An RNA of 177 nucleotides, treated with DMS and 2A3 and read out base by base. The RNA was probed in 150 mM KOAc, 10 mM MgCl2 and 150 mM bicine (pH 8.5) at 24 C. DMS adducts were read by reverse transcription with MarathonRT.
RNA sequence: GGGAACGACUCGAGUAGAGUCGAAAAGAUAUGGAGAAUUCACGACAUGCGGAUCGGAAACGAUCCAGCAACAGCGUGAUUCUCCUAAGUCAAAACAACAGCACACGCUUCGGCGUGUGCUGUUGAACAAACUAAUUAAGUUCGCUUAAUUAGUUUGAAAAGAAACAACAACAACAAC
Reactivity to DMS in 0.01 (KOAc 150mM, MgCl2 10mM, bicine 150mM(pH8.5), 24C), signal-to-noise 4, nucleotides 027 to 126: g000a010u000a290u000g000g000a020g000a020a010u010u010c000a010c010g010a100c080a230u000g030c000g000g000a010u000c000g000g000a060a040a090c000g000a000u000c000c000a060g040c010a020a090c300a110g000c000g020u000g000a040u000u000c000u000c000c000u000a010a030g000u010c010a100a090a120a170c010a000a000c010a000g000c000a010c000a000c000g020c010u000u000c220g030g010c000g020u000g000u000g000c000u000g000u010u000g010a060a160
Reactivity to 2A3 in 0.01 (KOAc 150mM, MgCl2 10mM, bicine 150mM(pH8.5), 24C), signal-to-noise 3, nucleotides 027 to 126: g000a010u040a020u110g010g000a010g010a020a050u300u230c020a010c060g260a100c090a110u050g010c000g010g010a000u000c000g000g020a010a020a030c010g000a010u020c010c020a020g000c000a010a110c030a030g090c000g000u000g000a000u000u010c000u010c010c000u000a030a000g020u000c020a000a030a100a190c000a000a000c000a000g040c010a000c000a000c070g050c000u120u230c300g150g020c000g010u000g010u000g000c010u000g000u000u000g000a000a010
Values are in units of 0.01, from 0 to 300, in steps of 10.